The record gives the reactivity of an RNA of 177 nucleotides to 2A3. Conditions: 150 mM KOAc, 10 mM MgCl2 and 150 mM bicine (pH 8.5), 24 C. It was measured as part of the RMDB library RFM100.
[RMDB]
RNA sequence: GGGAACGACUCGAGUAGAGUCGAAAAAGUGCAUAUAUGACUAUACGUAGUCAUAUAUGCACAAUAGCAAUACAGUACAAAUAUAGUGUGUUUGAUUUGCACUGUAGUUGUAUUGUAUUGCCACUAAAGGAAUCCAGCGUUUCGACGCUGGAUUCCUAAAAGAAACAACAACAACAAC
Reactivity to 2A3 in 0.01 (KOAc 150mM, MgCl2 10mM, bicine 150mM(pH8.5), 24C), signal-to-noise 1, nucleotides 027 to 126: a010g000u000g000c010a000u030a000u000a000u000g000a000c000u030a030u060a140c300g130u000a010g000u000c000a000u000a000u000a000u000g000c000a020c000a010a010u010a000g000c000a000a000u000a020c000a000g000u000a000c030a020a030a000u000a000u000a000g000u000g010u040g120u000u000u260g280a300u070u150u260g030c000a000c000u000g030u000a010g000u000u000g000u000a000u000u000g000u000a000u000u000g000c000c000a020c040u170a080a050